[RMDB]
RNA sequence: GGGAACGACUCGAGUAGAGUCGAAAAAUCUUUGGUAACUUCUGAUUAUAGAUGAAUGGCAUAGAGGUGUUAGAAAACAUGAGACAAAAGUAAUCUUCUUGAUGCUAGCGUCUCAGGUAAUUAGCAGUUAGAUAAUGGAAUUCGUUCCAUUAUCUAAAAAAGAAACAACAACAACAAC
Reactivity to DMS in 0.01 (KOAc 150mM, MgCl2 10mM, bicine 150mM(pH8.5), 24C), signal-to-noise 9, nucleotides 027 to 126: a060u010c020u000u000u010g010g010u010a060a080c040u000u000c020u010g010a090u010u010a110u020a070g000a070u010g000a090a060u010g000g010c040a040u010a050g010a070g020g010u000g010u000u000a060g010a080a060a090a050c060a070u010g010a010g000a010c010a040a300a110a010g010u000a030a050u000c000u010u020c210u020u020g010a020u000g000c000u000a030g000c300g000u000c000u000c020a010g010g010u000a030a090u010u000a040g020c080a060g010
Reactivity to 2A3 in 0.01 (KOAc 150mM, MgCl2 10mM, bicine 150mM(pH8.5), 24C), signal-to-noise 9, nucleotides 027 to 126: a000u030c040u050u040u050g090g020u080a040a060c010u040u020c010u030g060a080u050u080a070u100a150g120a080u070g090a150a090u070g040g000c020a020u050a070g130a060g070g040u020g030u040u030a050g080a040a120a010a010c050a060u040g000a000g010a020c010a010a030a020a000g030u110a180a190u010c020u240u020c050u100u290g010a000u000g000c000u000a010g010c000g010u000c000u000c000a000g020g000u020a030a040u020u040a020g030c030a010g050